Structure probing data (DMS) for a 177-nucleotide construct. The DMS profile rests on 621 reads. It was measured as part of the RMDB library 15KREP. DMS adducts were read by reverse transcription with MarathonRT. Conditions: 150 mM KOAc, 10 mM MgCl2 and 150 mM bicine (pH 8.5), 24 C.
[RMDB]
RNA sequence: GGGAACGACUCGAGUAGAGUCGAAAAUUCCGAGCGAAGAGCCGAACCGGGAAGAGGAAGCGCCCGAGAGGGAGCCAAUGCCAAAGAGGUGGGGAUCGUCGGAAGGUAUCGUCCCAAUGACCAAGAGCAAUAAUGGGAGGUUCGCCUCCCAUUAUUGAAAAGAAACAACAACAACAAC
Reactivity to DMS in 0.01 (KOAc 150mM, MgCl2 10mM, bicine 150mM(pH8.5), 24C), signal-to-noise 1, nucleotides 027 to 126: u010u000c000c000g000a100g030c020g010a080a160g010a300g030c010c010g020a110a170c050c100g000g000g030a110a060g000a280g000g020a240a130g010c110g030c060c000c000g020a180g030a220g010g000g020a030g000c000c110a030a120u010g000c030c030a000a090a080g000a170g000g010u000g020g010g000g010a110u000c020g020u000c000g010g000a000a030g000g000u000a090u000c080g000u000c000c000c020a140a090u010g000a130c090c080a130a100g020a110g000